[RMDB]
This 170-nucleotide RNA was probed chemically with DMS and 2A3.
RNA sequence: GGGAACGACUCGAGUAGAGUCGAAAAUUGUUCUCGAGGGCCUUCCUUCUUCGGUGAUCCUUCCUCUCCCUGUCGGUGAAGUCUCCCGCACGAGUCCUCUUCCUAGGUCCGGAGUCGAUCUCCAUCUCAACUGCCAUCUUCGGAUGGCAGAAAAGAAACAACAACAACAAC
Reactivity to DMS in 0.01 (KOAc 150mM, MgCl2 10mM, bicine 150mM(pH8.5), 24C), signal-to-noise 2, nucleotides 027 to 129: u050u070g030u020u000c000u010c020g050a150g000g000g000c100c000u000u000c020c040u000u000c020u030u000c090g020g040u020g010a140u030c020c030u010u000c000c000u000c030u020c000c000c000u030g060u000c080g030g060u020g100a160a100g010u030c010u020c030c000c030g040c110a180c070g010a060g030u020c020c000u000c060u030u000c020c010u010a100g020g010u090c000c050g000g000a000g010u030c030g020a090u000c010u030c020c040a080u060c030u040c070a030a160
Reactivity to 2A3 in 0.01 (KOAc 150mM, MgCl2 10mM, bicine 150mM(pH8.5), 24C), signal-to-noise 3, nucleotides 027 to 129: u080u040g000u050u000c020u010c010g020a090g010g030g020c000c000u000u020c030c000u030u070c000u050u040c020g030g040u080g050a160u020c000c000u020u030c010c000u020c020u020c010c000c000u030g100u100c070g020g000u070g050a040a010g020u010c020u010c010c010c000g010c000a060c030g020a020g040u030c000c000u000c000u010u010c020c020u040a050g000g030u000c010c020g000g000a020g020u000c000g030a030u000c020u000c000c000a030u050c040u000c000a020a100
Description: The data come from the RNA Mapping Database (RMDB), library 15KLIB. Reactivities are given for positions 27 through 129.